Description
This 177-nucleotide RNA was probed chemically with 2A3 and DMS. 2A3 adducts were read by reverse transcription with SuperScript II with manganese. It was measured as part of the RMDB library M2PK50.

RNA sequence: GGGAACGACUCGAGUAGAGUCGAAAAGCUAAAGACUUCGGUCUUUAGCAAAUAAAUUCAGGUGAUUUGCUAGCUUUAAGUGCAGCUAGAAAUUCAAAAAUAAAACAACGAGGUUCGCCUCGUUGAACUCUCCAAAUAACUUCGGUUAUUUGGAGAGAAAAGAAACAACAACAACAAC
Reactivity to 2A3 in 0.01 (KOAc 150mM, MgCl2 10mM, bicine 150mM(pH8.5), 24C), signal-to-noise 2, nucleotides 027 to 126: g000c000u010a000a000a020g000a000c010u040u140c270g040g010u010c000u000u010u040a000g040c010a000a000a000u040a000a020a020u150u080c050a030g130g120u100g120a030u070u020u110g160c000u000a010g000c010u050u080u170a210a020g120u140g190c000a010g020c000u000a000g000a020a040a010u060u070c030a010a010a030a090a090u150a090a070a020a040c010a000a000c000g000a020g010g030u000u050c180g090c060c010u000c000g000u010u010g000a000a000
Reactivity to DMS in 0.01 (KOAc 150mM, MgCl2 10mM, bicine 150mM(pH8.5), 24C), signal-to-noise 1, nucleotides 027 to 126: g030c010u000a010a000a000g000a010c000u000u020c130g030g010u000c000u010u010u020a000g000c000a000a060a060u010a050a080a130u000u000c090a130g020g010u000g000a020u000u000u000g010c000u000a000g000c010u000u000u000a080a150g010u000g010c230a010g000c010u000a030g000a010a000a000u000u020c020a050a150a030a090a070u040a050a010a100a200c010a010a030c000g010a030g000g000u000u000c240g010c030c000u000c000g010u000u000g010a110a100

Overview: High 2A3 reactivity points to a flexible backbone, as in loops and unpaired stretches.